Background: Structure probing data (DMS) for a 177-nucleotide construct. The reactions ran in a buffer of 150 mM KOAc, 10 mM MgCl2 and 150 mM bicine (pH 8.5), at 24 C. Source: RMDB library OK2TRN, as collected in RNAgym. Reactivities are given for positions 27 through 126.

[RMDB]
RNA sequence: GGGAACGACUCGAGUAGAGUCGAAAAUAAUUGUUGAGGAUUUCCUUAAGAAAUUGCACAUUUUUGAUGUAUCAAAAGUACCAGACGAUCAAAUGUAUAGACUGAGAGACAGAUUGAGACGAUUGCCACUCCACCAGUAGUUCGCUACUGGUGGAGUAAAAGAAACAACAACAACAAC
Reactivity to DMS in 0.01 (KOAc 150mM, MgCl2 10mM, bicine 150mM(pH8.5), 24C), signal-to-noise 1, nucleotides 027 to 126: u010a070a060u000u040g000u010u010g010a130g000g020a160u000u010u000c010c040u010u000a090a190g000a020a030a020u010u000g000c080a060c050a090u000u000u000u020u000g010a130u010g000u000a090u000c020a010a020a060a070g000u010a120c160c120a050g010a110c070g000a090u000c070a030a060a050u010g010u000a010u000a090g000a050c090u000g000a090g030a080g000a060c060a070g000a120u010u010g000a090g010a070c050g020a110u010u000g000c010c100